[RMDB]
RNA sequence: GGGAACGACUCGAGUAGAGUCGAAAAGUGCAUCCCCUGAUGUACGACAAGGUAUUUGAAGUGACUGAGGCGGCAGUAAAGACAGCCGUCUCGAUGGUGGCAUUCAUAACCAAACCAGAAGAUCAGGCGCUAAAUAUUACUUCGGUAAUAUUUAGCGAAAAGAAACAACAACAACAAC
Reactivity to DMS in 0.01 (KOAc 150mM, MgCl2 10mM, bicine 150mM(pH8.5), 24C), signal-to-noise 6, nucleotides 027 to 126: g010u000g020c050a060u000c040c120c020c030u010g020a070u000g000u000a040c040g010a150c140a090a160g000g000u000a090u000u000u020g010a040a060g020u000g010a060c040u010g000a030g020g000c010g000g020c000a150g010u010a100a100a100g010a130c130a120g010c000c000g030u000c000u000c010g000a040u010g010g010u000g000g000c010a090u000u000c030a020u000a070a050c010c000a030a060a260c040c010a130g010a110a110g000a110u000c020a020g000g010
Reactivity to 2A3 in 0.01 (KOAc 150mM, MgCl2 10mM, bicine 150mM(pH8.5), 24C), signal-to-noise 6, nucleotides 027 to 126: g020u020g010c010a030u030c030c030c010c000u030g000a010u020g020u030a010c020g010a020c100a070a050g030g000u060a290u150u060u030g020a020a030g020u030g090a020c080u130g010a010g000g000c010g030g000c020a020g050u140a060a180a060g200a040c050a040g000c000c000g000u000c010u000c000g000a040u130g030g040u030g040g000c110a240u030u030c010a010u040a040a030c000c000a010a010a040c010c010a030g060a110a020g040a150u060c010a010g050g000
This 177-nucleotide RNA was probed chemically with DMS and 2A3.
Reactivities are given for positions 27 through 126.
The data come from the RNA Mapping Database (RMDB), library OK2TST.
As a SHAPE reagent, 2A3 marks flexible, mostly unpaired nucleotides at the ribose 2'-OH.
The 2A3 profile rests on 9,367 reads.